[RMDB]
RNA sequence: GGGAACGACUCGAGUAGAGUCGAAAAAGAAGGACGCGAGACGCAAACCUGUGAGUGGAUCCUCGCCUUUAUUCACUGGGGACGACAACUCUGGGGAGAAAAGGGAGGAUCGGAUGGGAAGAGUAUAGAGGCCAAGAGUUCGCUCUUGGCAAAAGAAACAACAACAACAAC
Reactivity to 2A3 in 0.01 (KOAc 150mM, MgCl2 10mM, bicine 150mM(pH8.5), 24C), signal-to-noise 9, nucleotides 027 to 129: a010g080a010a020g040g010a020c010g020c020g050a060g020a050c040g010c070a050a080a080c020c000u070g030u090g070a040g010u100g030g010a020u010c000c000u020c030g270c000c000u080u050u050a100u060u070c060a070c210u030g000g000g020g050a080c100g050a040c090a100a100c020u000c010u030g020g000g010g000a030g040a000a050a000a000g010g000g000a000g000g000a010u010c010g000g020a060u060g020g000g010a050a030g010a010g060u060a030u090a110g130a040g080
Reactivity to DMS in 0.01 (KOAc 150mM, MgCl2 10mM, bicine 150mM(pH8.5), 24C), signal-to-noise 9, nucleotides 027 to 129: a110g010a090a060g000g050a060c060g020c040g010a090g030a070c070g030c150a040a120a110c050c030u030g050u010g000a060g000u010g000g000a020u020c020c010u000c020g060c030c020u050u020u020a060u000u000c010a070c050u020g030g020g050g040a140c210g000a080c230a110a080c000u010c000u030g010g010g000g010a050g000a030a030a030a020g040g000g000a070g030g010a010u020c030g000g000a090u040g050g000g000a020a030g010a030g030u010a110u060a090g000a170g040